This 207-nucleotide RNA was probed chemically with 2A3. The RNA was probed in 150 mM KOAc, 10 mM MgCl2 and 150 mM bicine (pH 8.5) at 24 C. For 2A3 the reverse transcriptase was SuperScript II with manganese. As a SHAPE reagent, 2A3 marks flexible, mostly unpaired nucleotides at the ribose 2'-OH.

RNA sequence: GGGAACGACUCGAGUAGAGUCGAAAAAAAACGCUGGGAAGGUGAAAUACGCACGUAAGGACAACAGCAGGACUGAAGCGCGCACGGUCCUGACAUGUCUAUCGUGCCACUCACCUUCCUGUGCUGAAGCGCGCACGGCAACCGAAAGGUGCGAAAAGUCUCUAAUACCCUUCGGGGUAUUAGAGACAAAAGAAACAACAACAACAAC
Reactivity to 2A3 in 0.01 (KOAc 150mM, MgCl2 10mM, bicine 150mM(pH8.5), 24C), signal-to-noise 2, nucleotides 027 to 156: a000a000a000a000c000g010c000u020g010g000g020a020a030g030g000u030g030a060a200a200u260a170c090g000c000a000c010g010u050a150a240g090g000a010c080a260a050c050a300g070c010a010g000g010a000c000u020g070a180a040g000c010g000c000g000c000a010c010g000g000u020c010c020u020g030a060c030a130u240g000u010c000u030a080u140c000g020u000g000c000c020a020c010u000c000a000c000c030u000u010c000c000u020g000u000g000c000u000g010a100a030g020c000g020c000g000c020a020c000g020g000c000a000a000c000c000g010a070a030a010g000g000u000g000c000g020a050a160a010a000